[RMDB]
RNA sequence: GGGAACGACUCGAGUAGAGUCGAAAAUUAAUACUGCUACAUUUCUAAGACCCUUAGUUAUUUAGCUUUACCGCCCAGGAUGGGGUGCAGCGUUCCUGCAAUAUCCAGGGCACCUAGGUGCAGCCUUCAUGCCUCAUGCCGUUCGCGGCAUGAGGAACAACACAAAGGAGUUCGCUCCUUUGUGUUGAAAAGAAACAACAACAACAAC
Reactivity to 2A3 in 0.01 (KOAc 150mM, MgCl2 10mM, bicine 150mM(pH8.5), 24C), signal-to-noise 2, nucleotides 027 to 156: u120u050a030a070u100a120c050u070g000c010u010a020c010a030u010u030u010c000u010a190a300g060a300c030c100c000u010u020a010g000u020u000a020u030u030u010a000g000c010u050u040u020a040c020c010g000c000c000c000a020g020g000a020u030g050g060g020g110u010g000c000a020g010c030g090u080u100c000c000u010g030c000a010a030u020a010u150c010c000a020g010g000g000c000a020c000c010u050a040g010g050u030g060c020a020g070c000c020u070u080c060a090u070g020c000c000u000c000a000u000g020c020c010g050u040u070c220g000c000g090g000c000a000u000g000a000g000g000a000a000